[RMDB]
RNA sequence: GGGAACGACUCGAGUAGAGUCGAAAAUGGACGUUGUUCGCAACGUCCACAUACUGAGACGUACGUUAAACGUAUCGCGGGCAAAAGAGCAGUUAGAAUAAGUACCUAUUGAGUUCGCUCAAUAGAAAGCUUAACGGUAAUUCGUUACCGUUAAGCUAAAAGAAACAACAACAACAAC
Reactivity to 2A3 in 0.01 (KOAc 150mM, MgCl2 10mM, bicine 150mM(pH8.5), 24C), signal-to-noise 5, nucleotides 027 to 126: u050g020g000a000c010g010u010u000g010u040u060c130g000c090a010a000c000g000u000c000c000a000c000a010u050a010c020u080g060a020g030a070c040g030u010a000c010g020u050u210a150a200a030c030g010u020a020u120c040g000c020g050g030g010c040a000a070a090a010g050a050g000c030a020g020u060u180a060g060a140a080u140a180a020g060u040a060c000c000u000a010u000u010g000a010g030u050u060c170g030c060u010c000a000a000u020a010g030a090a050
Reactivity to DMS in 0.01 (KOAc 150mM, MgCl2 10mM, bicine 150mM(pH8.5), 24C), signal-to-noise 4, nucleotides 027 to 126: u000g010g000a010c010g020u000u000g000u000u020c210g020c010a010a010c000g010u000c000c000a010c120a070u010a130c060u000g010a110g010a100c070g020u010a010c050g010u000u010a070a080a210c040g010u000a010u000c070g000c050g010g020g010c100a030a030a120a060g000a060g020c030a070g010u010u040a060g010a100a080u000a060a080g010u000a070c170c010u000a000u000u000g000a020g030u000u010c170g000c000u000c000a000a020u000a010g010a050a080

Chemical mapping of a 177-nucleotide RNA with 2A3 and DMS. The reactions ran in a buffer of 150 mM KOAc, 10 mM MgCl2 and 150 mM bicine (pH 8.5), at 24 C. DMS adducts were read by reverse transcription with MarathonRT. The DMS profile rests on 4,696 reads. For 2A3, 6,443 sequencing reads were counted. It was measured as part of the RMDB library M2PK50.